Chemical mapping of a 177-nucleotide RNA with 2A3 and DMS.
For 2A3, 5,082 sequencing reads were counted.
For 2A3 the reverse transcriptase was SuperScript II with manganese.
RNA sequence: GGGAACGACUCGAGUAGAGUCGAAAAAUCACCGACACCGUGCCGCUGCCGAAAUUGGUGACGUAGACGUUGCCGCCCGGGUUGACCGCCACCCCGUGCGGAUCGUUGAAGCUGGCGUGGGUGAUGGCACUCUGUUAGGUUUCGACCUAACAGAGUGAAAAGAAACAACAACAACAAC
Reactivity to 2A3 in 0.01 (KOAc 150mM, MgCl2 10mM, bicine 150mM(pH8.5), 24C), signal-to-noise 2, nucleotides 027 to 126: a000u030c010a020c020c010g080a020c010a010c020c010g130u060g040c020c020g040c040u040g020c010c000g190a270a300a290u220u270g010g000u020g020a030c060g030u040a020g010a030c010g030u030u150g130c020c000g000c020c010c010g000g010g000u010u040g070a150c050c070g090c090c000a020c000c000c000c000g000u000g010c010g020g000a020u030c000g000u010u030g010a030a020g020c070u090g020g000c010g000u060g080g000g010u000g010a030u020g050g040
Reactivity to DMS in 0.01 (KOAc 150mM, MgCl2 10mM, bicine 150mM(pH8.5), 24C), signal-to-noise 4, nucleotides 027 to 126: a050u000c020a040c000c010g020a020c020a030c050c020g010u000g030c040c030g020c020u000g000c000c010g010a110a110a170u010u010g020g020u000g010a010c030g000u010a130g000a020c030g000u010u000g020c000c010g000c010c030c010g010g010g020u000u010g010a170c110c090g000c110c020a100c150c010c000c010g020u000g000c000g000g000a040u000c020g000u000u000g000a100a090g040c020u000g020g010c010g030u000g010g010g040u000g010a020u000g010g000
For DMS, 5,296 sequencing reads were counted.